[RMDB]
Annotation
An RNA of 207 nucleotides, treated with DMS and 2A3 and read out base by base. For DMS, 5,968 sequencing reads were counted. Values are in units of 0.01, from 0 to 300, in steps of 10. The reactions ran in a buffer of 150 mM KOAc, 10 mM MgCl2 and 150 mM bicine (pH 8.5), at 24 C. It was measured as part of the RMDB library OK3TST. The 2A3 profile rests on 3,151 reads.
RNA sequence: GGGAACGACUCGAGUAGAGUCGAAAAGAUGGGGAGUCUUGAGCCCCGACACUGAGGAUUGGUCAGCACGCUUUUUGUCAUGGCCACAUGCUUGUGAUUUCCAGGGAGAAUUUGUUAACGAGUACGUUGGGGAGCUGAUCGACGAGGAGGAGUGCAAUCACGUACUUUUAUUCGUAAAAGUACGUGAAAAAGAAACAACAACAACAAC
Reactivity to DMS in 0.01 (KOAc 150mM, MgCl2 10mM, bicine 150mM(pH8.5), 24C), signal-to-noise 3, nucleotides 027 to 156: g020a120u000g010g010g020g020a110g000u000c100u000u010g020a090g040c000c010c000c020g000a050c050a090c100u000g020a060g000g010a120u010u000g020g010u000c040a050g000c060a060c160g010c160u000u010u020u010u010g040u010c090a180u010g000g000c010c020a040c110a080u010g010c040u020u020g020u000g010a170u000u010u010c040c030a140g020g020g000a150g010a060a110u000u000u030g010u000u000a100a090c090g000a110g000u010a040c060g010u000u040g000g000g020g000a120g040c040u020g000a130u000c060g040a110c040g010a110g010g000a100g000g000a050g030u010g010c080a100a220
Reactivity to 2A3 in 0.01 (KOAc 150mM, MgCl2 10mM, bicine 150mM(pH8.5), 24C), signal-to-noise 5, nucleotides 027 to 156: g090a060u110g000g010g010g020a010g030u030c070u080u080g060a060g030c020c010c000c010g010a020c030a020c040u100g040a020g010g020a060u060u050g020g000u020c000a010g060c050a040c050g120c140u170u100u040u190u180g070u110c070a100u070g010g020c040c020a030c010a050u110g010c040u070u040g040u050g080a100u070u060u030c070c050a060g030g030g000a080g030a060a120u100u060u090g070u080u060a100a030c030g000a020g040u040a030c040g020u060u050g030g000g010g000a020g020c030u050g030a060u090c050g040a040c040g010a030g010g010a020g000g000a020g020u040g000c030a010a040